Chemical mapping of a 177-nucleotide RNA with 2A3 and DMS. 2A3 adducts were read by reverse transcription with SuperScript II with manganese.

RNA sequence: GGGAACGACUCGAGUAGAGUCGAAAACGCGCAGGGAUGUUUUCGAAUCUAUGUUUAUGCUCUCCCUUUUACUGAUUCACAGUGACGAGCAUGGAUUCGCAUAGAUAGGCGUCUCAAAGGGAGCGCGCUCCCGCUCAGGUUUCGACCUGAGCGGGAGAAAAGAAACAACAACAACAAC
Reactivity to 2A3 in 0.01 (KOAc 150mM, MgCl2 10mM, bicine 150mM(pH8.5), 24C), signal-to-noise 2, nucleotides 027 to 126: c010g020c020g010c030a050g060g000g000a030u020g040u060u120u130u140c060g060a080a120u040c010u020a000u030g040u000u150u030a070u040g000c010u000c000u000c040c000c000u000u030u030u080a050c040u050g060a100u090u230c160a080c020a260g010u020g010a060c140g000a000g030c030a020u020g050g000a210u180u160c090g000c000a020u020a020g000a000u020a020g020g010c010g020u020c010u000c000a080a090a000g080g040g020a100g020c000g000c000g010
Reactivity to DMS in 0.01 (KOAc 150mM, MgCl2 10mM, bicine 150mM(pH8.5), 24C), signal-to-noise 2, nucleotides 027 to 126: c020g020c030g060c020a230g020g000g020a010u010g010u010u000u010u010c080g000a070a020u000c000u010a010u000g010u010u030u000a040u000g000c010u000c030u000c030c070c060u010u000u010u010a070c040u010g000a280u010u000c250a130c040a040g000u000g000a070c260g020a030g000c000a000u010g000g020a120u010u010c290g000c140a030u000a000g020a070u000a080g000g000c040g000u010c010u010c010a080a130a160g010g020g010a080g000c020g010c020g000

DMS adducts were read by reverse transcription with MarathonRT. It was measured as part of the RMDB library OK2TRN.